[RMDB]
RNA sequence: GGGAACGACUCGAGUAGAGUCGAAAAGAUCAAUUAUGAUUGCAAAGUAAUAUGUCAAGGCAGACAUAUCUAGCUGUCGCCUUAGCUAGAGAUAGCCGAUUUAUUGCUUUCAUAAGAACGGCAAGAAAGCGCCUAUAUAGUUCGCUAUAUAGGCGCUAAAAGAAACAACAACAACAAC
Reactivity to DMS in 0.01 (KOAc 150mM, MgCl2 10mM, bicine 150mM(pH8.5), 24C), signal-to-noise 2, nucleotides 027 to 126: g020a090u000c100a160a160u010u000a030u000g010a030u000u000g000c030a040a000a120g020u010a050a040u000a050u010g000u000c100a070a080g050g020c040a070g000a090c060a060u000a090u000c050u020a060g000c070u000g020u000c130g010c200c030u000u010a020g040c030u010a010g000a030g000a130u000a100g010c030c130g020a100u000u000u000a040u020u000g000c000u000u020u000c000a040u000a030a020g010a030a200c140g020g000c060a070a140g020a090a080
Annotation
The record gives the reactivity of an RNA of 177 nucleotides to DMS. DMS adducts were read by reverse transcription with MarathonRT. The reactions ran in a buffer of 150 mM KOAc, 10 mM MgCl2 and 150 mM bicine (pH 8.5), at 24 C.